[RMDB]
This 207-nucleotide RNA was probed chemically with 2A3 and DMS.
RNA sequence: GGGAACGACUCGAGUAGAGUCGAAAAAACCAGUAUUGCAAAGACUUUUUCAUGGCUAAAUAAACACAUACGUUUUGAGGAAAGUGAGAUUUUAAGAAUAGUCAUUUUAUAGCUAAAAUGUACACUCUGGUUUGUGCUGACAUUUCUGGCUUGUGUGUAGAUGGAUUUCAUUCGUGAAAUCCAUCUAAAAAGAAACAACAACAACAAC
Reactivity to 2A3 in 0.01 (KOAc 150mM, MgCl2 10mM, bicine 150mM(pH8.5), 24C), signal-to-noise 3, nucleotides 027 to 156: a000a000c070c020a070g040u120a130u160u150g000c030a070a040a070g050a260c010u040u130u030u040u070c130a080u120g020g020c010u030a090a090a080u130a090a170a010c050a000c010a110u170a160c100g020u090u100u150u140g100a060g000g010a040a040a020g000u100g050a070g020a150u070u080u100u200a060a030g030a070a030u070a050g010u030c000a000u020u030u070u190a160u070a050g000c010u050a000a000a070a050u040g000u030a040c060a000c060u040c020u050g000g090u060u090u130g050u050g000c020u020g020a040c000a060u050u100u090c050u060g000g000c000u030u020g040u020g030u020g000
Reactivity to DMS in 0.01 (KOAc 150mM, MgCl2 10mM, bicine 150mM(pH8.5), 24C), signal-to-noise 2, nucleotides 027 to 156: a080a050c020c020a170g020u000a100u000u000g000c010a100a080a140g010a220c040u000u000u000u000u000c050a110u000g010g000c010u010a030a060a090u000a070a060a040c050a090c050a080u000a080c080g020u000u000u000u010g010a160g020g010a070a050a100g010u000g010a140g010a180u010u000u010u010a060a080g030a090a150u010a050g010u010c010a090u000u010u000u000a090u010a090g010c090u000a050a010a020a060u000g000u010a060c020a030c050u000c080u000g000g000u000u010u010g030u000g020c030u020g010a060c050a070u000u000u000c030u000g040g010c020u000u000g010u010g010u010g030
Reactivities are given for positions 27 through 156. Source: RMDB library OK3TST, as collected in RNAgym. For DMS the reverse transcriptase was MarathonRT. The DMS profile rests on 4,124 reads. For 2A3 the reverse transcriptase was SuperScript II with manganese.